Source information:
Chemical mapping of a 207-nucleotide RNA with 2A3 and DMS. The reactions ran in a buffer of 150 mM KOAc, 10 mM MgCl2 and 150 mM bicine (pH 8.5), at 24 C. For DMS, 2,286 sequencing reads were counted.
RNA sequence: GGGAACGACUCGAGUAGAGUCGAAAACAAGCGCUAGCCAAGAGCUUAGCAGUGACCACUUGUCUACUCAUCGGGGGACGGCCAUCAGCCUGGAGGUGAACCAGGGAGAGUCUUGACUAUAGGCACGGCCCCAGCAUCAGUGGGAUCUUGGGGGAGACGUAAUGAUGCGUUUCGACGCAUCAUUACGAAAAGAAACAACAACAACAAC
Reactivity to 2A3 in 0.01 (KOAc 150mM, MgCl2 10mM, bicine 150mM(pH8.5), 24C), signal-to-noise 3, nucleotides 027 to 156: c030a060a000g040c010g000c080u030a000g010c030c030a210a070g030a040g030c020u150u070a030g030c090a100g020u020g070a060c000c000a020c040u050u110g020u030c000u050a040c000u030c050a120u190c160g010g000g010g000g030a050c000g020g000c020c000a080u100c040a030g110c000c010u030g000g020a070g070g080u130g100a080a070c010c000a010g000g030g000a030g010a010g040u000c000u120u130g050a060c020u050a040u080a250g010g000c070a060c130g030g000c000c010c010c000a000g010c000a030u140c010a010g020u060g000g050g000a020u020c000u050u070g030g000g000g000g040a060g000a010
Reactivity to DMS in 0.01 (KOAc 150mM, MgCl2 10mM, bicine 150mM(pH8.5), 24C), signal-to-noise 2, nucleotides 027 to 156: c060a070a040g050c040g000c060u000a090g060c010c030a150a130g010a230g010c050u000u010a170g070c050a060g020u000g000a160c040c030a100c100u000u020g020u000c040u000a060c010u000c030a180u010c040g000g000g000g000g000a030c070g020g020c030c000a110u000c020a160g010c030c020u010g010g010a180g040g000u000g000a070a110c020c080a120g010g000g020a150g000a220g020u010c060u000u000g000a060c040u010a210u000a120g020g030c080a070c030g020g000c000c000c000c020a060g000c120a140u000c090a130g050u010g010g020g040a040u000c030u000u000g030g020g040g000g000a200g000a280